[RMDB]
RNA sequence: GGGAACGACUCGAGUAGAGUCGAAAAGCCAAACAUUGGGACAGCUUCUAGUGCUGCAGCCGCAUAUGUCAUUGUUGAUAACAUGGAUUUUAGUCUUAGAAGUCAACCUCUGAUAUUAGCUAGUGCCACCAUCUCACAUUUGAUGGGAUGGUGCUAAAGACAUUCCAUAUUUCGAUAUGGAAUGUCUAAAAGAAACAACAACAACAAC
Reactivity to 2A3 in 0.01 (KOAc 150mM, MgCl2 10mM, bicine 150mM(pH8.5), 24C), signal-to-noise 8, nucleotides 027 to 156: g050c010c000a050a080a000c070a120u070u130g040g000g050a040c020a020g010c020u100u040c070u220a090g070u070g050c010u030g030c030a050g110c020c040g010c040a060u040a030u120g030u030c010a030u060u200g020u020u020g020a040u030a090a060c040a120u120g060g000a080u080u120u100u250a080g000u000c010u030u040a050g010a150a010g030u020c010a000a020c000c010u010c020u030g030a030u020a060u090u100a030g030c080u050a040g060u030g140c040c010a000c000c000a000u000c010u020c010a050c040a140u140u190u290g190a250u050g010g000g010a010u000g000g010u000g000c000u020a020a020
Reactivity to DMS in 0.01 (KOAc 150mM, MgCl2 10mM, bicine 150mM(pH8.5), 24C), signal-to-noise 5, nucleotides 027 to 156: g020c000c020a110a110a080c090a140u010u010g000g000g020a090c050a170g010c060u000u000c070u000a090g020u000g020c010u010g010c070a150g020c040c050g040c070a130u000a040u010g000u000c040a080u000u010g010u000u010g000a070u000a030a200c050a220u010g010g010a080u000u000u010u000a110g020u000c050u010u000a170g000a080a300g010u000c010a030a050c010c030u010c060u000g010a050u000a070u000u000a090g010c030u000a100g020u000g010c070c000a040c010c000a000u000c000u000c010a020c040a300u000u010u010g010a090u000g010g010g000a030u000g000g000u000g000c020u000a050a120
Source: RMDB library OK3TST, as collected in RNAgym. An RNA of 207 nucleotides, treated with 2A3 and DMS and read out base by base. The 2A3 profile rests on 8,786 reads. DMS adducts were read by reverse transcription with MarathonRT. Conditions: 150 mM KOAc, 10 mM MgCl2 and 150 mM bicine (pH 8.5), 24 C. The DMS profile rests on 11,838 reads.